[RMDB]
RNA sequence: GGGAACGACUCGAGUAGAGUCGAAAAGAUAUGGAUUCUGACGACAUGCGGACGGAUCGGAAACGAUCCGGUCGCAACAGCGUCGAGAAUCCUAAGUCAAAGAUCGCCAUCUUCGGAUGGCGAUCAACAGACAGAAGUAGUUCGCUACUUCUGUCUGAAAAGAAACAACAACAACAAC
Reactivity to DMS in 0.01 (KOAc 150mM, MgCl2 10mM, bicine 150mM(pH8.5), 24C), signal-to-noise 5, nucleotides 027 to 126: g000a010u010a050u010g000g000a010u000u000c000u000g010a020c000g010a030c050a300u020g020c010g010g000a010c000g000g000a020u000c000g020g010a020a010a040c010g000a010u000c010c000g000g000u000c000g020c010a070a050c230a140g000c010g010u000c000g010a040g010a010a010u000c000c000u000a010a070g000u000c010a150a140a170g010a010u000c000g010c010c000a010u000c000u000u010c240g010g000a010u000g000g000c000g010a010u000c000a060a140
Reactivity to 2A3 in 0.01 (KOAc 150mM, MgCl2 10mM, bicine 150mM(pH8.5), 24C), signal-to-noise 3, nucleotides 027 to 126: g010a000u030a010u060g000g000a000u000u010c010u030g000a010c010g030a030c120a260u300g010c010g000g010a000c000g000g000a000u010c010g000g000a020a010a010c000g000a000u000c020c000g010g010u000c000g000c000a020a010c060a010g000c000g000u020c020g010a030g010a010a000u000c000c010u010a030a010g010u000c040a170a080a120g000a010u010c010g010c010c000a020u020c010u070u090c180g150g000a000u000g000g000c000g000a000u000c010a000a000